The data come from the RNA Mapping Database (RMDB), library OK2TRN. Chemical mapping of a 177-nucleotide RNA with DMS and 2A3.
RNA sequence: GGGAACGACUCGAGUAGAGUCGAAAAGUACCUGCUCCCAUGGAGUCAUCUCGUUUGAUGGUACUGCCUUCAUCGUCAUCGUAGAUGAUGUGCGUUAGGACUGGCUCUGGUUCGAGACGACACGGAGCUUAUGAGUCAGCUUCGGCUGACUCAUAAGAAAAGAAACAACAACAACAAC
Reactivity to DMS in 0.01 (KOAc 150mM, MgCl2 10mM, bicine 150mM(pH8.5), 24C), signal-to-noise 3, nucleotides 027 to 126: g010u010a090c010c030u000g000c020u010c010c020c140a170u010g000g020a130g000u010c050a050u000c040u000c190g000u010u000u010g010a070u010g010g000u000a030c070u010g000c080c070u010u000c090a020u000c010g030u000c040a020u000c090g000u000a090g010a050u010g000a000u000g010u020g000c080g000u000u000a120g000g010a120c100u000g010g000c070u000c040u010g010g010u000u000c020g000a100g000a070c020g010a100c080a100c150g020g000a050g000
Reactivity to 2A3 in 0.01 (KOAc 150mM, MgCl2 10mM, bicine 150mM(pH8.5), 24C), signal-to-noise 2, nucleotides 027 to 126: g010u040a120c000c000u000g050c010u050c010c020c000a140u250g070g030a040g020u050c030a050u000c020u050c060g230u070u060u170g060a060u070g020g040u030a040c030u090g050c000c040u060u030c040a050u070c020g080u040c000a040u020c060g260u200a070g000a100u100g000a020u040g130u110g000c040g000u010u130a030g010g050a050c070u040g040g000c000u000c060u130g050g010u070u010c010g020a020g010a120c030g010a000c040a000c100g040g030a020g070
Reactivities are given for positions 27 through 126.
Reactivities are rounded to 0.1 and cut off at 0 and 3.